[RMDB]
RNA sequence: GGGAACGACUCGAGUAGAGUCGAAAAGUUGCCGACGAACCUUCCAACCUUCCAAACGUCGAUUUCGACAACCUUCCAACCUUCCAAUCUACUCGAGAGGAGGAGGAGGAGGAGGAGGAGGAAUUAAGUAUUUUGUGUAAUUCGUUACACAAAAUACAAAAGAAACAACAACAACAAC
Reactivity to 2A3 in 0.01 (KOAc 150mM, MgCl2 10mM, bicine 150mM(pH8.5), 24C), signal-to-noise 5, nucleotides 027 to 126: g030u040u060g140c030c000g030a060c040g030a070a080c000c000u030u030c040c030a100a090c050c010u100u020c020c000a110a060a060c050g020u010c010g050a150u070u120u190c030g010a020c010a070a040c000c000u050u040c010c030a080a090c030c020u120u000c020c010a060a070u000c000u060a060c030u040c060g020a030g010a030g050g030a020g010g020a050g020g020a050g000g000a060g010g050a040g010g060a020g000g050a030g030g060a050a090u180u110a190a040
Reactivity to DMS in 0.01 (KOAc 150mM, MgCl2 10mM, bicine 150mM(pH8.5), 24C), signal-to-noise 4, nucleotides 027 to 126: g020u000u000g010c030c010g000a140c140g000a090a090c070c030u000u000c020c050a100a140c030c030u000u010c030c040a050a100a140c190g020u000c030g000a300u000u010u010c020g040a030c040a090a130c050c010u000u000c010c020a050a080c040c060u000u000c010c020a080a220u000c010u010a050c100u010c050g010a020g000a290g000g010a110g000g000a140g000g000a100g020g020a130g010g010a070g000g000a140g000g010a130g000g000a270a050u000u010a040a160
Chemical mapping of a 177-nucleotide RNA with 2A3 and DMS. Source: RMDB library M2PK90, as collected in RNAgym. Conditions: 150 mM KOAc, 10 mM MgCl2 and 150 mM bicine (pH 8.5), 24 C. 2A3 is a SHAPE reagent: it acylates the 2'-hydroxyl of flexible nucleotides of all four kinds.